[RMDB]
RNA sequence: GGGAACGACUCGAGUAGAGUCGAAAAGAGAUGACAGAAAAAGAUAUGUUCAGCUUCGUGACAGUGGCACUGAAUGUCCGUGAUCCUGUAUCAGGACGUCCUGUCAUGAAAGAGCCAUGGCCAGAGGCAGCUUCAGGUUAUUCGUAACCUGAAGCUGAAAAGAAACAACAACAACAAC
Reactivity to DMS in 0.01 (KOAc 150mM, MgCl2 10mM, bicine 150mM(pH8.5), 24C), signal-to-noise 4, nucleotides 027 to 126: g030a080g010a060u020g000a070c100a060g010a060a050a090a070a050g000a080u020a050u000g000u020u010c060a110g000c080u000u010c010g000u010g000a000c000a010g000u040g010g010c020a180c170u010g000a090a060u050g000u000c000c000g010u040g010a010u000c020c130u020g000u050a040u000c000a140g000g000a020c040g000u000c020c010u000g020u000c010a010u000g020a030a040a040g000a090g020c040c040a060u000g000g000c040c030a080g010a090g000g000
Reactivity to 2A3 in 0.01 (KOAc 150mM, MgCl2 10mM, bicine 150mM(pH8.5), 24C), signal-to-noise 5, nucleotides 027 to 126: g100a000g020a020u140g030a050c050a070g240a060a140a010a020a010g130a040u140a060u160g050u030u090c030a020g000c010u010u010c000g030u020g010a000c000a020g020u190g100g000c050a020c140u180g100a160a100u230g010u010c010c030g180u070g030a020u050c060c150u280g040u120a040u030c020a010g000g010a010c020g000u010c010c000u010g000u000c010a000u000g020a010a000a000g050a000g000c020c010a040u090g020g010c010c020a020g000a050g070g020